An RNA of 207 nucleotides, treated with 2A3 and read out base by base. Source: RMDB library OK3TST, as collected in RNAgym. Conditions: 150 mM KOAc, 10 mM MgCl2 and 150 mM bicine (pH 8.5), 24 C.

RNA sequence: GGGAACGACUCGAGUAGAGUCGAAAAAGUAGCUCAAGUGGACCAUCAGCGGCAACAGCCAACGAGCAGUCCACAACUGCCAAACCAAGCCACAAGCAUGCCACAGUAGCUAUCACGACAUCUAAGCCAGCACCAGCAACAACAGUGCAACAUAGACGCUAGCUGCAAACUUCGGUUUGCAGCUAGCAAAAGAAACAACAACAACAAC
Reactivity to 2A3 in 0.01 (KOAc 150mM, MgCl2 10mM, bicine 150mM(pH8.5), 24C), signal-to-noise 1, nucleotides 027 to 156: a000g040u040a010g020c030u050c090a140a090g010u000g010g000a020c000c010a070u040c030a010g030c030g020g000c000a170a200c020a300g030c020c030a000a020c050g000a000g000c110a010g020u010c010c000a000c000a020a000c000u010g000c040c040a080a190a040c030c030a060a030g020c000c000a030c000a070a000g000c050a050u110g030c000c100a070c020a050g030u120a000g020c010u030a040u120c000a000c150g110a080c030a060u010c070u100a040a000g050c140c000a000g000c020a000c020c020a000g000c010a030a110c030a020a010c020a130g020u000g080c000a070a060c000a080u210a060g070a010c040